[RMDB]
RNA sequence: GGGAACGACUCGAGUAGAGUCGAAAAGAUAUGGACCCUAACGCUCGAUAAGAUGGUGGUCGGAAACGACCACCCAUCUUUUGACGAGCUUAGGGUCCUAAGUCAAAGGAUGGCUUCGGCCAUCCAACCUUUUUGACAAGUUCGCUUGUCAAAAAGGAAAAGAAACAACAACAACAAC
Reactivity to 2A3 in 0.01 (KOAc 150mM, MgCl2 10mM, bicine 150mM(pH8.5), 24C), signal-to-noise 2, nucleotides 027 to 126: g020a000u040a050u090g000g010a000c000c020c000u050a110a030c230g020c010u000c010g110a150u060a290a040g010a030u010g040g010u010g040g000u000c030g000g050a050a050a020c000g010a000c010c040a010c000c000c000a000u010c000u000u010u020u160g140a040c010g000a000g000c000u000u000a000g000g010g000u000c000c000u000a000a000g010u000c000a030a000a030g000g000a010u020g000g020c030u070u190c300g160g000c020c000a000u000c010c010a000a000
Reactivity to DMS in 0.01 (KOAc 150mM, MgCl2 10mM, bicine 150mM(pH8.5), 24C), signal-to-noise 3, nucleotides 027 to 126: g010a050u000a250u010g000g010a020c010c000c000u000a010a000c300g020c000u000c000g030a170u000a010a010g000a000u000g000g020u000g000g020u000c000g030g010a090a070a100c000g030a010c000c000a010c160c080c100a000u000c000u000u000u010u010g000a240c080g010a010g000c000u000u000a010g010g020g010u000c000c000u000a010a040g000u000c040a130a110a160g000g000a010u000g010g010c000u000u030c270g030g010c020c000a000u000c000c000a040a050
Overview
An RNA of 177 nucleotides, treated with 2A3 and DMS and read out base by base. The 2A3 profile rests on 3,387 reads. 2A3 adducts were read by reverse transcription with SuperScript II with manganese. High 2A3 reactivity points to a flexible backbone, as in loops and unpaired stretches.